Record summary: This 177-nucleotide RNA was probed chemically with DMS and 2A3.

[RMDB]
RNA sequence: GGGAACGACUCGAGUAGAGUCGAAAAUGUGCCUUUUCCUGCAUUUGCGCGCUCGAUGCACAGUUUUCAAGAUUACGAAGCGGCAUUUCCAUUACGUUCGCUAGCUGAUGAGCAAUUGGACGGUUUGCUCGACACCCUAAUUCGUUAGGGUGUCGAGAAAAGAAACAACAACAACAAC
Reactivity to DMS in 0.01 (KOAc 150mM, MgCl2 10mM, bicine 150mM(pH8.5), 24C), signal-to-noise 1, nucleotides 027 to 126: u000g000u000g020c000c190u010u000u010u000c020c020u010g000c080a160u010u000u010g010c060g020c030g010c000u000c060g020a120u000g020c040a050c050a080g040u010u000u020u010c120a060a090g000a110u010u000a120c100g010a080a060g020c030g000g000c060a070u000u000u000c050c040a080u000u000a030c110g000u010u000c070g000c040u000a100g000c030u010g000a100u010g010a080g000c020a030a060u000u000g010g000a060c060g010g000u000u010u000g010
Reactivity to 2A3 in 0.01 (KOAc 150mM, MgCl2 10mM, bicine 150mM(pH8.5), 24C), signal-to-noise 2, nucleotides 027 to 126: u090g000u020g000c020c010u070u060u030u040c000c000u030g070c030a130u080u020u190g030c180g000c010g010c050u010c030g010a030u090g010c000a020c010a100g030u080u000u140u070c140a110a090g030a290u100u200a050c080g010a080a010g020c000g030g040c030a010u050u020u080c000c020a120u130u170a050c030g000u030u020c000g000c000u030a040g000c030u120g060a160u130g140a150g000c010a010a050u000u080g030g000a020c030g000g050u020u130u140g040
Description: DMS adducts were read by reverse transcription with MarathonRT. The 2A3 profile rests on 1,103 reads. 2A3 adducts were read by reverse transcription with SuperScript II with manganese. The reactions ran in a buffer of 150 mM KOAc, 10 mM MgCl2 and 150 mM bicine (pH 8.5), at 24 C. It was measured as part of the RMDB library OK2TST.